[RMDB]
RNA sequence: GGGAACGACUCGAGUAGAGUCGAAAAGAUAUGGAUCCCGGGUCGACAUGGCUACUAUCGGAAACGAUAGAAGCCAACAGCGAUUGGGAUCCUAAGUCAAAACCUACUGUGCUUCGGCACAGUAGGAGAUCCUAGCAUACUUCGGUAUGCUAGGAUCAAAAGAAACAACAACAACAAC
Reactivity to DMS in 0.01 (KOAc 150mM, MgCl2 10mM, bicine 150mM(pH8.5), 24C), signal-to-noise 1, nucleotides 027 to 126: g000a050u000a180u020g000g000a020u000c000c000c000g040g010g010u000c000g000a130c080a160u020g000g000c000u000a140c000u000a000u000c000g010g000a040a050a110c000g050a010u000a010g000a200a000g000c000c000a010a040c280a160g020c010g000a020u010u000g000g010g000a010u000c000c010u000a000a080g000u020c020a160a140a100a200c000c000u000a020c000u000g010u000g000c000u000u050c240g040g000c010a000c000a010g000u000a000g000g010a020
Reactivity to 2A3 in 0.01 (KOAc 150mM, MgCl2 10mM, bicine 150mM(pH8.5), 24C), signal-to-noise 1, nucleotides 027 to 126: g000a000u060a020u070g010g010a000u000c010c040c040g020g120g010u020c010g010a250c110a300u140g000g000c010u010a050c000u000a150u000c000g000g020a020a010a010c000g020a010u000a010g010a020a000g000c000c000a010a010c040a040g000c000g000a010u050u060g000g000g000a000u000c000c000u010a010a000g020u000c020a010a010a100a250c000c000u000a000c000u020g000u010g010c010u040u110c300g080g000c010a020c020a000g000u000a000g000g000a030